[RMDB]
This 177-nucleotide RNA was probed chemically with 2A3 and DMS. For DMS, 2,646 sequencing reads were counted.
RNA sequence: GGGAACGACUCGAGUAGAGUCGAAAAGAUAUGGAUGUUUCCUAUUCUGGUGGUCGGAAACGACUUUGUACCAGAUAGGAGAACAUCCUAAGUCAAAGGGUCUACACUCUUCGGAGUGUAGACCCAACUUUUCAUUGAACUUCGGUUCAAUGAAAAGAAAAGAAACAACAACAACAAC
Reactivity to 2A3 in 0.01 (KOAc 150mM, MgCl2 10mM, bicine 150mM(pH8.5), 24C), signal-to-noise 1, nucleotides 027 to 126: g030a000u070a050u180g000g000a010u020g000u040u000u000c000c000u010a040u180u220c020u010g040g020u060g020g030u030c020g040g000a080a050a100c040g000a010c000u100u120u240g200u120a020c000c000a000g000a010u000a000g000g000a100g040a020a000c000a000u000c000c010u020a100a010g040u010c040a010a080a170g010g000g010u010c030u020a010c000a020c030u000c020u050u130c300g080g000a010g000u030g010u020a010g010a010c010c000c000a000a000
Reactivity to DMS in 0.01 (KOAc 150mM, MgCl2 10mM, bicine 150mM(pH8.5), 24C), signal-to-noise 2, nucleotides 027 to 126: g000a040u000a300u000g000g010a000u000g020u000u000u010c000c000u000a010u010u010c000u000g010g000u000g000g000u000c000g010g000a130a060a230c020g000a010c000u000u020u000g020u000a040c000c000a010g010a010u000a010g010g010a030g000a010a010c000a000u000c000c010u010a000a070g000u000c050a090a120a130g000g010g030u000c000u000a000c000a020c000u000c010u000u030c190g010g010a020g020u000g010u000a000g010a000c000c000c000a000a000
It was measured as part of the RMDB library TTRDEL. Reactivities are given for positions 27 through 126.